[RMDB]
RNA sequence: GGGAACGACUCGAGUAGAGUCGAAAAAUGUUUGGGCUAUGACCAAUGGUUUUAGCUCAAUCAAAGCCGAUCUUGUCUUGGAUGCGCUUGCUUCUAUGACAGGCGUUACAGUUGAACAGGUGUUGGCCUCCUAGAGUUGAUUCGUCAACUCUAGGAGAAAAGAAACAACAACAACAAC
Reactivity to 2A3 in 0.01 (KOAc 150mM, MgCl2 10mM, bicine 150mM(pH8.5), 24C), signal-to-noise 3, nucleotides 027 to 126: a000u130g010u010u000u000g000g000g000c010u010a000u010g020a020c030c040a200a180u130g010g000u030u000u000u000a000g000c010u000c000a010a010u010c010a020a060a000g000c010c000g010a040u010c010u030u020g010u000c020u040u070g050g030a070u140g030c010g020c010u000u020g010c010u190u100c120u270a190u170g090a110c010a000g000g010c000g010u030u050a030c010a080g050u080u070g130a110a010c000a020g020g020u030g040u040u040g020g000c000
Reactivity to DMS in 0.01 (KOAc 150mM, MgCl2 10mM, bicine 150mM(pH8.5), 24C), signal-to-noise 3, nucleotides 027 to 126: a090u000g010u000u000u000g000g000g000c000u000a020u000g010a000c000c020a160a110u010g030g010u000u000u000u000a000g010c000u000c000a000a000u010c030a080a120a160g010c020c010g020a050u000c000u000u000g000u000c020u010u000g000g000a150u000g010c010g000c040u000u010g000c050u000u000c250u010a120u010g000a090c010a010g000g010c050g020u000u010a200c020a030g010u000u010g020a090a020c010a040g010g010u010g010u020u000g010g020c030
This 177-nucleotide RNA was probed chemically with 2A3 and DMS. For DMS, 4,911 sequencing reads were counted.